[RMDB]
RNA sequence: GGGAACGACUCGAGUAGAGUCGAAAACAUAAGACCUCAGAGCUAAUGAGCCACAUACCUACCCAAGGUGAAAGCGCCUUCUCUCGCAAUGUGUAACUCAUGAUUCUCAUGACCCCUGGUUGGAGAGCGCGCUAACACGCCUUCGGGCGUGUUAGAAACGUAAGCAUACUUUCGAGUAUGCUUACGUAAAAGAAACAACAACAACAAC
Reactivity to 2A3 in 0.01 (KOAc 150mM, MgCl2 10mM, bicine 150mM(pH8.5), 24C), signal-to-noise 4, nucleotides 027 to 156: c050a050u120a080a030g050a070c020c030u090c080a030g010a020g040c020u090a180a110u090g020a020g050c050c000a050c020a050u110a030c020c000u040a070c040c010c020a030a010g040g000u070g040a130a110a010g020c020g000c030c030u160u040c020u010c030u040c030g020c080a030a090u050g020u000g020u100a070a040c010u010c030a010u030g020a150u300u030c080u020c090a060u100g040a080c010c000c000c040u040g050g000u050u010g000g020a030g010a010g020c040g000c000g000c000u000a000a000c010a000c000g000c010c010u030u070c190g040g010g000c010g000u000g000u000u000a000g010a020a040
Reactivity to DMS in 0.01 (KOAc 150mM, MgCl2 10mM, bicine 150mM(pH8.5), 24C), signal-to-noise 2, nucleotides 027 to 156: c100a150u000a070a120g030a070c040c030u000c050a090g000a080g010c120u000a140a060u000g000a050g020c030c010a030c030a060u000a060c060c020u000a130c030c020c020a040a070g020g000u000g020a070a080a120g000c080g000c030c030u000u000c050u000c040u000c060g040c060a110a060u000g030u030g010u000a070a050c030u000c000a060u000g010a160u010u010c060u010c020a080u000g000a140c010c010c000c010u000g000g000u000u000g000g010a110g000a150g020c120g000c050g040c000u000a020a030c000a020c000g020c000c010u000u010c300g040g020g010c000g040u000g020u000u000a010g000a060a050

The record gives the reactivity of an RNA of 207 nucleotides to 2A3 and DMS.
The data come from the RNA Mapping Database (RMDB), library M2RFPK.